[RMDB]
RNA sequence: GGGAACGACUCGAGUAGAGUCGAAAAACUGUGCCCUCAUUGGCCCCCAGCAAUCAGACUCAACAGACGGAGCAACUGCCAUCCGAGGCUCCUGAACCAGGGCCAUUCACCAGGAGCAUGCGGCUCCCUGAUGUCCAGCUCUGGCUGGUGCUGCUGACCCAAAAUAUCCAUUCGUGGAUAUUUUGGGAAAAGAAACAACAACAACAAC
Reactivity to 2A3 in 0.01 (KOAc 150mM, MgCl2 10mM, bicine 150mM(pH8.5), 24C), signal-to-noise 1, nucleotides 027 to 156: a020c080u110g000u110g060c030c060c070u130c080a200u090u300g010g030c000c050c070c020c000a000g010c000a030a090u080c030a030g070a070c030u080c100a030a060c000a120g080a040c080g000g000a000g020c000a050a050c060u090g020c010c070a100u010c040c010g010a060g000g060c030u130c080c030u080g050a050a030c050c010a000g020g030g000c010c000a030u110u090c020a020c030c020a020g010g000a000g000c030a010u180g110c050g060g000c000u030c000c000c000u040g000a040u030g010u050c040c050a010g000c040u040c000u030g000g000c000u030g020g000u020g000c020u000g000c020u120g030a030
Reactivity to DMS in 0.01 (KOAc 150mM, MgCl2 10mM, bicine 150mM(pH8.5), 24C), signal-to-noise 1, nucleotides 027 to 156: a070c030u020g000u010g010c030c000c010u000c090a140u000u000g000g010c000c020c020c040c050a210g060c110a140a200u000c070a100g020a050c020u020c030a080a090c080a020g000a160c190g040g010a060g020c000a060a060c040u000g000c030c140a160u010c040c000g050a160g050g010c010u000c020c030u000g010a060a110c150c040a110g000g000g020c010c020a220u010u020c030a160c060c030a040g030g020a030g000c000a180u010g020c220g040g000c020u000c010c000c070u010g080a060u000g000u010c190c130a070g000c050u000c040u020g030g000c050u000g000g010u000g020c010u010g020c020u000g020a300

This 207-nucleotide RNA was probed chemically with 2A3 and DMS. DMS adducts were read by reverse transcription with MarathonRT. Conditions: 150 mM KOAc, 10 mM MgCl2 and 150 mM bicine (pH 8.5), 24 C. For DMS, 1,684 sequencing reads were counted.